[RMDB]
RNA sequence: GGGAACGACUCGAGUAGAGUCGAAAACACCUCGAUCGCUUGGGACGAGGCCAACCCGGUCAAGACCUUCACCGCGAUCCGCAAGGCCCUCCGCGAUCGCGGCGUGCCCCAGACCGGCCUCAACGUGGUUGUCGGCACCAACGUCUACGCGGCACUCCAAUGAUUUGAAGUUCGCUUCAAAUCAUUGAAAAGAAACAACAACAACAAC
Reactivity to 2A3 in 0.01 (KOAc 150mM, MgCl2 10mM, bicine 150mM(pH8.5), 24C), signal-to-noise 3, nucleotides 027 to 156: c040a030c000c010u020c010g040a100u010c010g040c070u210u290g030g020g020a060c080g000a160g020g000c020c010a050a070c050c010c010g000g020u050c050a090a050g050a150c050c020u140u140c180a080c090c030g000c020g050a060u080c040c040g000c030a070a130g070g010c020c050c010u030c040c030g010c030g010a000u000c000g000c000g000g000c010g000u030g080c000c000c000c000a000g000a040c000c070g020g020c000c010u080c030a060a050c060g090u120g010g030u050u070g110u030c070g030g000c060a040c040c040a110a040c030g030u000c020u010a010c090g000c090g020g000c020a010c020u070c040
Reactivity to DMS in 0.01 (KOAc 150mM, MgCl2 10mM, bicine 150mM(pH8.5), 24C), signal-to-noise 1, nucleotides 027 to 156: c090a130c010c010u010c030g020a040u000c000g000c100u010u040g000g030g010a130c010g120a130g010g000c030c010a060a190c130c000c000g050g040u000c060a070a100g010a050c050c040u020u010c030a030c050c000g020c040g030a040u000c050c030g060c060a130a100g000g000c000c030c000u020c040c020g030c130g010a030u000c010g060c030g010g000c010g010u000g000c000c000c020c070a180g000a070c050c020g030g000c040c000u000c010a080a130c110g010u000g040g050u000u000g000u000c000g000g030c090a120c030c050a080a060c040g020u020c020u000a100c070g010c030g010g000c030a130c030u000c020